[RMDB]
The record gives the reactivity of an RNA of 207 nucleotides to 2A3 and DMS. The RNA was probed in 150 mM KOAc, 10 mM MgCl2 and 150 mM bicine (pH 8.5) at 24 C. Reactivities are given for positions 27 through 156.
RNA sequence: GGGAACGACUCGAGUAGAGUCGAAAAGUAUGGAUGCCACCGUGACGGCUCAAUCACACAAGUGCCAACGAUAACGAGGCGCUCGCUAUUGCUGCGUAACUGACGACCUGACGGUCUGACGUUACAAAAAACGAAAAGUGGUUCGCCACUUUUCGAACAAACGAGACAGGUUCGCCUGUCUCGUUUGAAAAGAAACAACAACAACAAC
Reactivity to 2A3 in 0.01 (KOAc 150mM, MgCl2 10mM, bicine 150mM(pH8.5), 24C), signal-to-noise 3, nucleotides 027 to 156: g090u080a070u150g060g030a010u070g010c030c010a080c090c050g020u040g060a050c070g030g000c010u000c060a070a090u120c020a060c030a050c020a150a060g030u020g040c010c000a120a040c120g060a180u140a280a030c070g030a070g010g020c010g020c050u030c020g020c050u090a100u160u260g010c080u080g020c020g010u000a010a010c000u010g020a010c010g000a000c000c000u070g170a060c140g010g000u000c000u000g000a010c010g000u030u000a010c000a010a010a000a000a000a000c030g000a000a000a000a000g000u000g020g040u030u050c170g090c070c000a000c000u010u000u000u000c000g000a030a000
Reactivity to DMS in 0.01 (KOAc 150mM, MgCl2 10mM, bicine 150mM(pH8.5), 24C), signal-to-noise 1, nucleotides 027 to 156: g030u010a030u000g000g050a090u000g000c020c000a100c020c100g000u000g030a060c100g030g010c020u000c050a160a070u000c020a120c010a070c090a040a050g020u030g000c010c020a110a230c180g020a030u000a170a130c090g020a120g040g060c020g020c000u000c000g060c000u000a030u000u000g030c000u000g010c000g020u000a000a000c000u000g000a300c300g000a030c000c000u020g030a200c210g000g030u000c000u000g000a300c300g010u000u000a040c020a000a030a010a080a060a100c010g010a030a020a020a000g000u000g020g000u000u000c300g030c030c000a030c020u010u000u000u000c030g000a070a130